RNA sequence: GGGAACGACUCGAGUAGAGUCGAAAAUCACCAAUUCGUUGGUGACGUGCGUACUACUGCGACAUGCCUUAAGGUGGGAGUAGAAUCCCAAAUAGGAUUCUACGAGGAUCACCCAUAGGCAACAGCGCAGUAUCGCUAACCUUCGCUUCGGCGAAGGGCAUAACCGCAGGUUCGCCUGCGGUUAUGCAAAAGAAACAACAACAACAAC
Reactivity to DMS in 0.01 (KOAc 150mM, MgCl2 10mM, bicine 150mM(pH8.5), 24C), signal-to-noise 1, nucleotides 027 to 156: u000c020a040c010c000a000a070u010u000c170g050u010u000g000g000u000g010a050c060g010u000g030c000g000u000a070c090u000a000c000u010g010c000g010a080c120a300u000g060c020c030u000u000a210a040g000g020u000g000g040g010a170g010u000a010g010a050a020u010c000c000c000a060a150a280u000a090g000g000a020u000u000c000u010a020c000g000a100g020g000a090u010c000a010c000c000c000a180u000a050g010g070c010a010a060c040a090g030c010g010c030a030g000u000a000u000c040g010c010u000a080a270c000c000u010u000c020g040c030u000u000c300g060g040c000g020a000a000g000g020
Reactivity to 2A3 in 0.01 (KOAc 150mM, MgCl2 10mM, bicine 150mM(pH8.5), 24C), signal-to-noise 3, nucleotides 027 to 156: u020c000a000c040c000a010a040u170u100c290g050u070u020g000g000u000g020a050c040g150u100g000c020g030u050a080c050u000a000c000u040g020c000g090a160c080a090u030g010c000c000u000u020a060a050g000g000u000g000g020g000a000g000u000a000g000a010a000u020c030c030c040a160a260a300u290a080g000g000a000u000u040c000u000a000c020g040a140g000g010a030u020c000a000c010c020c010a030u080a020g010g010c010a020a000c040a010g040c010g000c010a000g000u000a030u150c010g000c020u040a070a090c000c000u000u000c020g000c010u050u070c160g100g000c010g000a000a000g010g010